[RMDB]
RNA sequence: GGGAACGACUCGAGUAGAGUCGAAAAUACUCUUUUCUGUAAAGAGGAGACUGCUGGAUCCGCCGCCCAAGUUCGAGCAUGAGCCAAGUGCCGAACGAGGAGAACGCGAAAGGAAGGAUCAGAGGACGAGAGGGGUGAGAUGGUAAAGAAACGGGGAUCAUUACAUAAGGUUCGCCUUAUGUAAUGAAAAAGAAACAACAACAACAAC
Reactivity to 2A3 in 0.01 (KOAc 150mM, MgCl2 10mM, bicine 150mM(pH8.5), 24C), signal-to-noise 3, nucleotides 027 to 156: u100a020c020u020c000u040u070u050u040c110u160g120u220a070a090a040g010a020g050g010a030g010a050c070u050g040c020u040g060g030a030u040c040c040g030c040c030g020c040c040c000a050a010g010u000u030c010g010a070g080c010a010u090g020a040g110c040c050a130a020g010u000g000c000c000g000a000a010c000g000a040g010g020a050g050a080a030c040g010c050g080a110a040a010g050g030a030a050g010g000a010u070c030a010g020a000g040g000a010c050g020a030g030a020g070g020g000g000u080g020a050g000a040u060g020g040u100a080a110a070g040a070a090a020c030g010g000g000g000a000
Reactivity to DMS in 0.01 (KOAc 150mM, MgCl2 10mM, bicine 150mM(pH8.5), 24C), signal-to-noise 2, nucleotides 027 to 156: u010a090c020u000c000u000u000u030u000c190u000g000u000a050a110a050g000a020g020g000a160g010a100c090u000g040c030u000g020g010a120u000c050c030g030c060c020g000c090c010c010a130a300g020u000u000c000g020a120g050c050a050u000g010a140g050c270c160a070a300g000u000g000c000c010g000a010a020c000g000a230g000g010a100g010a060a070c020g000c020g000a110a080a110g000g020a080a070g000g010a060u000c040a090g010a070g030g020a090c070g000a120g000a080g010g000g040g060u000g010a090g040a050u010g000g010u000a060a090a090g000a070a060a130c050g030g000g060g000a230
About this RNA:
An RNA of 207 nucleotides, treated with 2A3 and DMS and read out base by base. High 2A3 reactivity points to a flexible backbone, as in loops and unpaired stretches. The DMS profile rests on 3,062 reads. For 2A3 the reverse transcriptase was SuperScript II with manganese. Source: RMDB library VIROID, as collected in RNAgym. Conditions: 150 mM KOAc, 10 mM MgCl2 and 150 mM bicine (pH 8.5), 24 C.